RNA sequence: GGGAACGACUCGAGUAGAGUCGAAAAGGGCUUGACGCAUCGCCCGAAUACGAUGCAUGUGCUUUUGCACUAAGAUAAAUGUCCGUAUUGUAGGGGACAUAGAACCUACUCAUUAAUGUCCGAAGAGUCUGGGACGAUCAUCAGGCCAGACUAAGAAGAGCACUAUAUGGUUCGCCAUAUAGUGCUCAAAAGAAACAACAACAACAAC
Reactivity to 2A3 in 0.01 (KOAc 150mM, MgCl2 10mM, bicine 150mM(pH8.5), 24C), signal-to-noise 3, nucleotides 027 to 156: g000g000g000c060u030u030g080a000c050g040c010a000u000c000g020c020c010c000g000a020a030u080a050c030g020a030u100g020c050a050u120g000u020g030c030u100u180u210u300g000c020a050c040u090a110a040g020a130u180a100a220a020u100g010u040c030c010g040u060a040u090u090g010u010a000g000g040g000g020a000c030a020u100a060g090a010a010c000c000u030a020c000u010c060a020u000u230a120a010u040g060u050c020c000g030a090a040g030a020g040u000c000u060g010g050g090a160c080g030a070u050c050a020u000c020a040g020g010c000c000a000g000a020c040u000a000a040g090a040a020
Reactivity to DMS in 0.01 (KOAc 150mM, MgCl2 10mM, bicine 150mM(pH8.5), 24C), signal-to-noise 1, nucleotides 027 to 156: g020g000g060c030u010u010g010a120c090g000c050a050u000c030g000c000c090c160g000a090a070u010a070c020g060a040u000g040c010a120u000g030u000g000c020u000u000u010u000g040c000a050c000u000a170a090g000a100u010a090a100a090u010g000u000c040c020g020u010a110u010u000g010u010a110g000g000g020g010a170c060a050u010a060g000a040a090c040c030u010a070c040u000c050a130u000u000a070a060u010g010u020c020c020g000a120a130g010a110g050u000c090u010g000g050g030a090c030g020a100u000c080a100u010c000a120g010g000c000c000a110g030a020c020u020a060a080g020a130a230